[RMDB]
The record gives the reactivity of an RNA of 177 nucleotides to DMS. DMS adducts were read by reverse transcription with MarathonRT. The reactions ran in a buffer of 150 mM KOAc, 10 mM MgCl2 and 150 mM bicine (pH 8.5), at 24 C. Values cover nucleotides 27 to 126.

RNA sequence: GGGAACGACUCGAGUAGAGUCGAAAAGGUGAAGCCCGAGGGCGACCUGUCCGACCCUCGCAUGGCGAGCAACGUUGGCGGGAAGGCGUACCACUUCCCCGUCCAGAUAGGCGACUUCGAGAUUGCACGACUGACUCGGUUUCGACCGAGUCAGUCGAAAAGAAACAACAACAACAAC
Reactivity to DMS in 0.01 (KOAc 150mM, MgCl2 10mM, bicine 150mM(pH8.5), 24C), signal-to-noise 1, nucleotides 027 to 126: g000g000u000g020a140a240g000c000c000c010g100a100g040g100g040c010g000a070c060c020u000g000u000c000c060g020a120c210c160c000u000c000g020c020a110u000g040g010c010g000a040g020c150a060a070c160g000u010u000g010g010c040g020g000g000a060a080g000g000c050g010u010a070c160c060a150c070u000u000c040c000c020c040g040u010c000c060a080g000a070u000a040g010g000c020g000a120c050u000u000c010g000a080g000a120u000u000g000c150a110